Chemical mapping of a 177-nucleotide RNA with 2A3. For 2A3 the reverse transcriptase was SuperScript II with manganese. The reactions ran in a buffer of 150 mM KOAc, 10 mM MgCl2 and 150 mM bicine (pH 8.5), at 24 C.
RNA sequence: GGGAACGACUCGAGUAGAGUCGAAAAACGCAGUAGUUACGACUACUGCGAGGAGCGGGGGGGCAGGAGGGGCUCAGGGAGAAAGUGUGUGCCGCCCCUGGCCCUCUCUGCCCUUCCGUCCCCCGAAAUUUUGGCUUACCUUCGGGUAAGCCAAAAUAAAAGAAACAACAACAACAAC
Reactivity to 2A3 in 0.01 (KOAc 150mM, MgCl2 10mM, bicine 150mM(pH8.5), 24C), signal-to-noise 1, nucleotides 027 to 126: a000c000g000c000a010g000u000a000g010u000u100a160c280g010a010c140u000a000c000u000g010c000g000a000g000g010a010g070c000g000g000g030g000g000g000g000c000a010g080g000a040g000g050g000g000c020u150c150a010g050g080g040a090g130a030a170a120g130u230g030u050g070u180g220c020c030g030c020c000c000c000u000g020g020c000c020c000u000c000u020c000u000g000c000c000c000u000u000c000c000g000u010c000c000c000c000c000g030a190a220